[RMDB]
Description: The record gives the reactivity of an RNA of 207 nucleotides to 2A3. It was measured as part of the RMDB library OK3TST. For 2A3, 499 sequencing reads were counted.

RNA sequence: GGGAACGACUCGAGUAGAGUCGAAAAGUAUAUUGCCGUCUGAAGACCUUCGAUGAGACCUCCGACUCCAACGGCAGGUCCAGAGCGAGCAGCUGUCGUUGCAAUGACGAUUUGGGACUCGACAGCCAUAAAGUUGACGAGAAACAAAAGACAGACACACGGGACUAUACUUCGGUAUAGUCCCGUGAAAAGAAACAACAACAACAAC
Reactivity to 2A3 in 0.01 (KOAc 150mM, MgCl2 10mM, bicine 150mM(pH8.5), 24C), signal-to-noise 1, nucleotides 027 to 156: g100u060a060u050a050u300u090g010c000c000g040u070c090u100g060a180a040g060a150c110c010u010u090c110g080a070u010g010a060g030a220c000c000u000c000c070g080a130c170u110c060c070a080a040c000g000g020c080a020g050g000u000c000c000a010g020a010g030c070g010a000g030c010a000g000c010u060g000u010c000g070u100u050g020c060a150a090u070g010a040c030g000a000u080u010u020g030g000g010a010c010u000c010g000a000c010a000g000c030c030a220u300a160a120a000g000u020u030g020a010c000g000a000g000a030a060a050c110a000a060a010a010g140a000c040a040g150a070c080a000